[RMDB]
RNA sequence: GGGAACGACUCGAGUAGAGUCGAAAAUUUCGUCUGAACCCCUCUGAGCGUCUGGUCAGACGGCCGUCCUUCGUGCUGACCAAGUCCUGGGCAGUGCACGCACUCCUCCAGACGGCUCACAACGUCGCUGAUGACACGUAUUCGUACGUGUCAUCAGAAAAGAAACAACAACAACAAC
Reactivity to 2A3 in 0.01 (KOAc 150mM, MgCl2 10mM, bicine 150mM(pH8.5), 24C), signal-to-noise 1, nucleotides 027 to 126: u000u020u040c020g030u000c030u020g070a150a130c000c000c030c020u060c080u060g000a010g000c000g020u040c010u010g010g010u020c000a010g000a020c000g030g000c020c060g110u050c000c000u070u110c090g030u050g000c000u010g000a060c010c010a090a050g060u050c000c040u030g000g010g000c000a030g010u020g080c010a000c100g070c020a060c040u060c000c020u030c010c010a010g010a000c000g120g090c000u010c000a030c010a010a020c030g120u110c050g000
Reactivity to DMS in 0.01 (KOAc 150mM, MgCl2 10mM, bicine 150mM(pH8.5), 24C), signal-to-noise 3, nucleotides 027 to 126: u000u000u010c020g010u000c030u000g020a070a300c050c020c020c090u010c160u020g020a050g040c030g020u010c010u010g000g000u010c020a000g000a020c000g010g010c210c090g000u010c040c070u000u010c140g020u000g010c010u000g010a060c020c010a070a140g020u010c160c060u000g000g000g000c080a010g000u000g010c010a110c130g010c220a090c110u000c030c000u000c020c030a050g010a030c020g020g010c010u000c040a040c140a080a030c090g010u010c140g030